[RMDB]
RNA sequence: GGGAACGACUCGAGUAGAGUCGAAAACAUCGCGCUCGCGCUGGAGGGUGGCUGGAUCAACGGGAUGAAGGACGGGUUCACCCAGGCACUGGCCCAGAACGAUUUUUCGCUGUUCGAGAAGUCGCUCAUCCCCCGCAGUAUUCGUACUGCGGGGGAUAAAAGAAACAACAACAACAAC
Reactivity to DMS in 0.01 (KOAc 150mM, MgCl2 10mM, bicine 150mM(pH8.5), 24C), signal-to-noise 2, nucleotides 027 to 126: c060a060u000c040g050c180g020c050u020c090g040c150g030c080u000g010g000a050g000g000g010u000g000g030c070u020g010g000a000u010c080a100a140c120g020g020g020a120u020g000a080a100g000g010a110c100g020g040g030u000u000c060a090c060c000c030a070g000g000c060a090c090u000g000g000c000c030c060a030g000a060a130c030g000a050u000u000u000u000u000c020g030c180u010g010u000u000c020g020a090g010a040a110g020u000c060g040c040u010c030
Reactivity to 2A3 in 0.01 (KOAc 150mM, MgCl2 10mM, bicine 150mM(pH8.5), 24C), signal-to-noise 1, nucleotides 027 to 126: c020a030u050c010g050c020g000c060u010c020g000c000g040c080u050g050g050a100g070g030g020u030g000g050c050u010g000g060a080u040c040a060a050c060g020g040g100a160u120g110a090a040g020g040a040c000g010g030g030u020u040c030a080c020c010c000a030g060g140c030a010c090u040g020g000c090c020c020a020g020a020a010c030g020a010u000u000u010u000u020c000g000c030u050g000u090u040c000g010a030g010a000a000g020u030c030g020c070u000c040